[RMDB]
RNA sequence: GGGAACGACUCGAGUAGAGUCGAAAAGAUAUGGAGGUACUGCGAAGGGGAGACGAUGGGUCGGAAACGACCUUUCGUCGAAGAACUGGAGUACCUCCUAAGUCAAAUCUAGGGUUCGCCCUAGAAACAGACUACCAUAGUUCGCUAUGGUAGUCUGAAAAGAAACAACAACAACAAC
Reactivity to DMS in 0.01 (KOAc 150mM, MgCl2 10mM, bicine 150mM(pH8.5), 24C), signal-to-noise 3, nucleotides 027 to 126: g000a050u000a180u010g000g000a010g020g010u000a010c010u010g010c130g010a230a140g020g000g010g010a180g000a010c010g000a000u010g000g000g030u000c010g020g010a040a030a090c000g010a010c000c000u000u000u000c000g030u000c000g000a070a110g000a110a170c030u000g000g000a030g010u000a000c000c000u000c000c000u020a000a040g000u000c020a100a120a130u000c000u000a010g010g010g000u000u000c300g020c000c000c000u010a010g000a020a100a220
Reactivity to 2A3 in 0.01 (KOAc 150mM, MgCl2 10mM, bicine 150mM(pH8.5), 24C), signal-to-noise 2, nucleotides 027 to 126: g040a010u060a030u050g020g020a010g000g010u030a010c010u070g300c120g110a200a200g080g030g040g000a170g000a040c020g020a010u030g020g010g000u000c010g030g000a030a010a020c020g000a000c000c000u000u010u000c000g000u000c020g020a030a030g030a010a000c040u060g070g040a020g010u000a010c010c000u000c000c000u020a010a000g000u010c010a000a020a090u000c000u000a000g050g010g010u040u070c280g130c000c010c000u000a010g000a010a010a010

Overview: The record gives the reactivity of an RNA of 177 nucleotides to DMS and 2A3. For 2A3, 4,504 sequencing reads were counted. Reactivities are given for positions 27 through 126. Source: RMDB library TTRDEL, as collected in RNAgym.